[RMDB]
The record gives the reactivity of an RNA of 177 nucleotides to DMS. The reactions ran in a buffer of 150 mM KOAc, 10 mM MgCl2 and 150 mM bicine (pH 8.5), at 24 C.

RNA sequence: GGGAACGACUCGAGUAGAGUCGAAAAAUUGUUUUCAAUUGUACUGGAAUUGGCGCUAGAUCAAUUGGUGGUGUUGAAGAUAAAAAUGUUUAUCCUGGUAGAGGACAAGUAGUAGUUAUUAAAGCUCGAUGAUUAGGGGGUUCGCCCCCUAAUCAUCAAAAGAAACAACAACAACAAC
Reactivity to DMS in 0.01 (KOAc 150mM, MgCl2 10mM, bicine 150mM(pH8.5), 24C), signal-to-noise 1, nucleotides 027 to 126: a100u010u000g010u010u020u000u000c020a050a050u000u000g010u000a200c050u020g030g000a050a050u000u000g010g070c050g030c160u000a090g010a070u000c080a030a030u000u000g020g000u000g000g010u010g030u000u000g000a030a090g000a060u000a010a030a100a090a080u010g030u000u020u010a060u000c000c020u010g010g000u010a060g010a030g020g020a030c090a060a100g030u000a030g010u010a040g010u000u010a100u020u020a050a090a080g000c120u000c090
Notes:
DMS (dimethyl sulfate) methylates the pairing face of unpaired adenines and cytosines. For DMS the reverse transcriptase was MarathonRT. The data come from the RNA Mapping Database (RMDB), library OK2TRN. The DMS profile rests on 807 reads. Reactivities are given for positions 27 through 126.